RNA sequence: GGGAACGACUCGAGUAGAGUCGAAAACCACAUAUCUUCGGAUAUGUGGAAAUAAGGGAUACGGAUUAUUCCGGUCGACUCCGGAGAAACAAAGUCAAAUAAAAAGCAUCUUCUUCGGAAGAUGCAAUCUUAACCAUUUGUUCGCAAAUGGUUAAGAAAAAGAAACAACAACAACAAC
Reactivity to 2A3 in 0.01 (KOAc 150mM, MgCl2 10mM, bicine 150mM(pH8.5), 24C), signal-to-noise 3, nucleotides 027 to 126: c000c000a000c000a010u010a000u000c010u050u060c200g110g000a000u010a000u010g000u020g000g030a050a060a010u150a030a030g060g020g020a030u060a140c080g030g010a020u110u080a140u300u010c000c010g000g000u000c000g000a000c100u110c300c000g000g000a020g100a030a020a000c010a010a020a000g030u030c050a020a060a030u140a060a130a020a020a000g000c000a000u000c000u010u000c000u010u080c240g070g000a000a000g000a000u010g020c000a000a010
Reactivity to DMS in 0.01 (KOAc 150mM, MgCl2 10mM, bicine 150mM(pH8.5), 24C), signal-to-noise 3, nucleotides 027 to 126: c010c000a010c000a030u000a000u000c000u000u010c170g020g000a000u000a000u010g000u000g000g000a000a050a020u000a080a110g010g010g010a110u000a060c130g010g000a150u020u000a110u010u000c000c000g000g000u000c020g010a030c010u010c010c000g000g000a040g020a060a000a220c160a000a050a020g010u000c010a110a080a120u020a020a040a090a140a080g000c020a000u000c000u000u000c010u010u000c180g020g010a010a000g000a000u000g010c000a010a010